Overview: Structure probing data (DMS) for a 177-nucleotide construct. The RNA was probed in 150 mM KOAc, 10 mM MgCl2 and 150 mM bicine (pH 8.5) at 24 C. The DMS profile rests on 1,451 reads.
[RMDB]
RNA sequence: GGGAACGACUCGAGUAGAGUCGAAAACAACUAAUAACCAGAGAUCCUCCCCGAGAAAAUAGCUUUGCCAUCUGAAUCCGAGCUGAAGUUCUUAAGGUAGAUGACAAUCCAUUGCAUUGGAGUACAACAUGCCGUAUGGAUUCGUCCAUACGGCAUGAAAAGAAACAACAACAACAAC
Reactivity to DMS in 0.01 (KOAc 150mM, MgCl2 10mM, bicine 150mM(pH8.5), 24C), signal-to-noise 2, nucleotides 027 to 126: c090a090a090c150u000a070a120u010a100a150c030c040a100g010a140g020a070u020c030c020u000c010c000c000c000g010a090g000a110a080a090a090u000a040g020c040u000u020u000g020c050c000a040u000c050u030g030a080a060u000c060c020g000a040g010c060u000g030a100a100g020u000u000c030u010u000a030a140g010g000u010a060g000a050u000g000a050c060a050a060u000c010c020a070u010u010g000c130a060u000u000g000g020a080g050u000a040c150a080a170
Source: RMDB library OK2TST, as collected in RNAgym. DMS adducts were read by reverse transcription with MarathonRT.